[RMDB]
RNA sequence: GGGAACGACUCGAGUAGAGUCGAAAAGAUAUGGAUCGCCUGGUAGUAUCUAGACAGGAGUCGGAAACGACUCCCGAAUACUAUAAUCAGGACGAUCCUAAGUCAAAGCGAUUAGUUCGCUAAUCGCGUCUACAGAACCCUUCGGGGUUCUGUAGACAAAAGAAACAACAACAACAAC
Reactivity to DMS in 0.01 (KOAc 150mM, MgCl2 10mM, bicine 150mM(pH8.5), 24C), signal-to-noise 3, nucleotides 027 to 126: g000a030u010a300u020g000g010a010u000c000g020c010c000u000g000g020u010a090g030u000a000u010c230u000a120g040a280c300a060g000g010a020g020u020c000g010g000a080a070a250c000g000a020c000u000c010c000c020g000a100a060u000a010c030u000a050u000a300a050u020c010a020g000g000a170c000g020a020u000c000c000u020a020a050g000u010c050a130a120a200g000c000g000a000u000u000a000g000u010u000c280g030c010u000a000a000u000c000g020c020
Reactivity to 2A3 in 0.01 (KOAc 150mM, MgCl2 10mM, bicine 150mM(pH8.5), 24C), signal-to-noise 2, nucleotides 027 to 126: g010a020u030a020u140g000g000a010u010c020g020c000c000u000g050g000u010a050g020u010a070u180c210u090a130g070a140c140a100g000g010a000g000u010c010g010g030a050a050a050c020g010a000c010u000c000c000c000g030a040a000u060a030c030u060a020u170a300a170u120c010a010g040g070a150c000g000a010u000c000c000u010a060a000g050u020c080a150a230a030g030c000g010a010u030u000a010g060u040u100c300g030c220u000a000a000u000c020g020c030
Source: RMDB library TTRDES, as collected in RNAgym.
An RNA of 177 nucleotides, treated with DMS and 2A3 and read out base by base.
For DMS, 1,909 sequencing reads were counted.
The reactions ran in a buffer of 150 mM KOAc, 10 mM MgCl2 and 150 mM bicine (pH 8.5), at 24 C.